[RMDB]
RNA sequence: GGGAACGACUCGAGUAGAGUCGAAAAUAACGGCGAGACACGAUCCUGUUUGGAGCACUCCCUGGAGACGGAACGACAGGUGGGACUGCUCGCCGAGCGCAUCGAACGGGAUGGCGGCAUCGCUCUAGCCAGUCCGAUCCUUCGGGAUCGGACUGGCAAAAGAAACAACAACAACAAC
Reactivity to 2A3 in 0.01 (KOAc 150mM, MgCl2 10mM, bicine 150mM(pH8.5), 24C), signal-to-noise 1, nucleotides 027 to 126: u250a130a000c010g000g010c000g000a020g040a030c000a000c140g030a030u000c000c020u000g000u050u030u000g080g000a030g070c020a020c070u050c080c020c000u000g000g000a070g010a010c030g170g100a290a000c000g000a010c000a010g060g000u030g050g080g210a010c180u020g030c000u030c000g220c010c000g000a030g000c050g000c000a120u020c020g000a040a150c110g050g000g000a010u050g250g060c000g020g000c000a020u000c030g000c000u070c020u010a000
Chemical mapping of a 177-nucleotide RNA with 2A3. High 2A3 reactivity points to a flexible backbone, as in loops and unpaired stretches. Conditions: 150 mM KOAc, 10 mM MgCl2 and 150 mM bicine (pH 8.5), 24 C. The 2A3 profile rests on 524 reads.